Record summary:
The record gives the reactivity of an RNA of 207 nucleotides to 2A3. It was measured as part of the RMDB library M2RFPK. Conditions: 150 mM KOAc, 10 mM MgCl2 and 150 mM bicine (pH 8.5), 24 C.
RNA sequence: GGGAACGACUCGAGUAGAGUCGAAAAAGCCACCGCUACGGCGGUGGCAAGUAGAAAAGUUGGUGCUUAGACCACGCCCUCUACCGUAAUAAUUGAUAAAUAGGCGAGUAUCAGUACGCUGAUACAAAAAACACUCACACGUUCGCGUGUGAGUGAAGUUAACACGGUUGUUCGCAACCGUGUUAACAAAAGAAACAACAACAACAAC
Reactivity to 2A3 in 0.01 (KOAc 150mM, MgCl2 10mM, bicine 150mM(pH8.5), 24C), signal-to-noise 1, nucleotides 027 to 156: a000g000c010c000a000c040c030g000c000u030a000c230g130g000c000g000g000u020g000g040c010a000a000g000u020a000g010a070a000a000a020g110u110u040g000g000u060g090c180u300u200a090g050a020c000c000a000c010g000c000c000c000u000c000u000a030c050c030g100u090a050a070u080a090a040u250u140g060a020u020a230a070a030u080a000g050g000c030g010a040g000u000a000u000c000a000g000u010a010c210g080c060u000g000a000u000a010c000a000a250a000a000a000a000c010a000c000u010c000a000c000a010c000g010u000u080c170g070c000g080u000g010u000g000a010g000u010g000a030a010